[RMDB]
RNA sequence: GGGAACGACUCGAGUAGAGUCGAAAAGAUAUGGAGUCGCUGAUGACCCAUAGUAACAAGUGUCGGAAACGACACCGCCCUAUGGCAAGGCGUCUCCUAAGUCAAAAGGCGAACUUCGGUUCGCCAACUCUAGUGGUUUGUUCGCAAACCACUAGAGAAAAGAAACAACAACAACAAC
Reactivity to DMS in 0.01 (KOAc 150mM, MgCl2 10mM, bicine 150mM(pH8.5), 24C), signal-to-noise 4, nucleotides 027 to 126: g000a020u010a300u000g010g000a030g020u000c000g020c010u000g020a140u010g000a100c300c000c010a020u000a000g020u000a080a090c190a200a070g000u010g020u000c000g000g000a100a130a180c000g000a020c000a000c000c040g000c300c140c000u000a000u010g000g010c010a100a110g010g010c010g000u000c000u000c000c010u000a030a070g000u000c010a040a080a090a100g000g000c000g000a000a010c000u000u010c190g020g020u000u000c000g010c000c000a000a030
Reactivity to 2A3 in 0.01 (KOAc 150mM, MgCl2 10mM, bicine 150mM(pH8.5), 24C), signal-to-noise 3, nucleotides 027 to 126: g010a040u060a040u180g000g010a030g010u020c010g000c040u030g070a300u120g040a140c000c000c020a000u000a000g130u190a140a140c110a230a070g010u000g000u000c000g000g060a090a050a070c000g000a000c000a000c010c000g000c020c000c000u000a000u010g020g000c020a060a170g000g000c000g000u000c000u000c010c000u030a150a020g040u040c030a050a000a080a230g010g000c010g000a000a000c000u070u120c300g100g000u010u000c000g000c040c000a010a000
Structure probing data (DMS and 2A3) for a 177-nucleotide construct.
Reactivities are given for positions 27 through 126.
The 2A3 profile rests on 6,394 reads.
For 2A3 the reverse transcriptase was SuperScript II with manganese.